RNA sequence: GGGAACGACUCGAGUAGAGUCGAAAACUGUCAUUAUUCAGCGUGCUUACAGACGCCACCUUUUAAAGCGAACUGUAAAACAAGCUUCCUUUACGUACAAUAAAAACAAAAUCAAAGGUGGGGCUAACUAAAUAGCACUCUUCGGAGUGCUAUUUAGAAAAGAAACAACAACAACAAC
Reactivity to DMS in 0.01 (KOAc 150mM, MgCl2 10mM, bicine 150mM(pH8.5), 24C), signal-to-noise 3, nucleotides 027 to 126: c010u000g000u000c110a120u050u010a150u010u000c040a050g010c060g040u000g000c060u000u010a070c040a050g000a110c050g030c000c030a040c040c010u000u000u000u000a070a050a070g020c040g010a030a090c060u010g000u000a040a030a150a150c090a050a110g000c020u010u010c020c020u000u000u020a060c120g010u020a040c150a080a130u020a020a060a070a090a020c110a100a070a100a090u040c100a030a050a020g010g030u000g010g010g000g020c110u000a080a160
Reactivity to 2A3 in 0.01 (KOAc 150mM, MgCl2 10mM, bicine 150mM(pH8.5), 24C), signal-to-noise 2, nucleotides 027 to 126: c010u050g060u080c060a110u040u270a090u130u090c020a000g020c000g030u020g000c020u050u040a050c010a020g050a060c020g020c050c010a010c010c030u000u010u050u240a070a070a000g060c020g030a080a030c020u010g040u100a000a010a040a120c050a070a060g040c020u040u060c000c020u090u050u050a070c080g080u090a020c090a070a110u230a170a110a030a020a010c050a050a140a020a020u110c050a040a000a040g030g000u040g000g030g020g000c030u020a010a020

Chemical mapping of a 177-nucleotide RNA with DMS and 2A3.
The reactions ran in a buffer of 150 mM KOAc, 10 mM MgCl2 and 150 mM bicine (pH 8.5), at 24 C.
Source: RMDB library OK2TST, as collected in RNAgym.
The DMS profile rests on 1,710 reads.
For DMS the reverse transcriptase was MarathonRT.